Structure probing data (DMS and 2A3) for a 177-nucleotide construct. Conditions: 150 mM KOAc, 10 mM MgCl2 and 150 mM bicine (pH 8.5), 24 C.
RNA sequence: GGGAACGACUCGAGUAGAGUCGAAAAGAUAUGGAACUGUACGAGCUGCACAUCGGAAACGAUGUGGCAGCGAUGAGUAUUUCCUAAGUCAAACGGAGUGGACUAACUUCGGUUAGUCCACUCCGAACUCACUCAGAAUGUUCGCAUUCUGAGUGAGAAAAGAAACAACAACAACAAC
Reactivity to DMS in 0.01 (KOAc 150mM, MgCl2 10mM, bicine 150mM(pH8.5), 24C), signal-to-noise 4, nucleotides 027 to 126: g010a070u010a300u010g010g000a030a040c300u000g000u000a010c020g000a210g000c000u000g000c000a020c000a000u010c010g010g010a090a110a220c010g010a000u000g010u000g020g010c000a000g000c010g000a050u010g000a200g010u000a030u000u010u000c000c000u000a060a170g000u010c080a050a120a290c010g020g000a040g010u010g000g020a010c000u000a000a000c010u000u010c170g020g000u000u000a000g000u000c000c000a010c000u000c000c000g000a000a000
Reactivity to 2A3 in 0.01 (KOAc 150mM, MgCl2 10mM, bicine 150mM(pH8.5), 24C), signal-to-noise 1, nucleotides 027 to 126: g010a000u210a080u250g020g030a080a060c080u150g050u160a010c060g040a060g060c000u000g000c000a000c070a000u010c000g010g000a040a060a010c000g010a020u000g000u060g110g100c000a000g040c000g010a000u020g010a010g020u040a000u010u030u040c010c000u040a190a030g090u050c000a050a080a080c030g000g000a000g040u000g000g020a000c000u000a010a010c010u040u080c160g000g000u000u000a000g010u070c000c000a000c000u000c010c020g000a000a000